RNA sequence: GGGAACGACUCGAGUAGAGUCGAAAAAGUUCUAAACCACUAUCUGAUACAAGACCAAUUGCAUGUUUUGUUGGGAAAAUCAUUUGUAUUUUACCGUUGAAUGGUGCACGAACUUCACCUUGUGAAGCAUACAGAGCGGCUUCGGCCGCUCUGUAUGAAAAGAAACAACAACAACAAC
Reactivity to 2A3 in 0.01 (KOAc 150mM, MgCl2 10mM, bicine 150mM(pH8.5), 24C), signal-to-noise 2, nucleotides 027 to 126: a000g030u050u000c040u060a050a030a050c000c010a020c090u130a120u090c050u120g010a020u050a090c080a000a000g010a030c000c040a070a270u160u170g210c160a160u240g070u060u130u020u040g030u000u050g000g010g090a040a050a000a030u060c100a070u000u070u300g020u110a040u000u120u020u110a100c020c060g140u040u080g060a190a070u060g010g070u030g000c000a000c110g020a010a000c000u040u050c020a080c030c000u000u050g130u020g130a070a080g000
Reactivity to DMS in 0.01 (KOAc 150mM, MgCl2 10mM, bicine 150mM(pH8.5), 24C), signal-to-noise 2, nucleotides 027 to 126: a030g020u000u000c000u050a040a120a060c130c000a010c100u000a150u000c000u000g000a120u020a060c050a040a020g000a030c030c060a110a230u030u010g030c240a220u030g000u000u040u000u000g010u000u010g000g020g000a010a010a000a030u010c010a270u010u080u070g020u030a010u000u050u000u040a040c020c010g020u030u000g000a060a060u000g010g040u000g000c110a130c230g000a030a020c000u010u010c110a070c010c040u080u030g010u000g000a110a020g010
The record gives the reactivity of an RNA of 177 nucleotides to 2A3 and DMS. For DMS, 2,400 sequencing reads were counted. High DMS reactivity at an A or C suggests that its Watson-Crick edge is free. For DMS the reverse transcriptase was MarathonRT. Values are in units of 0.01, from 0 to 300, in steps of 10.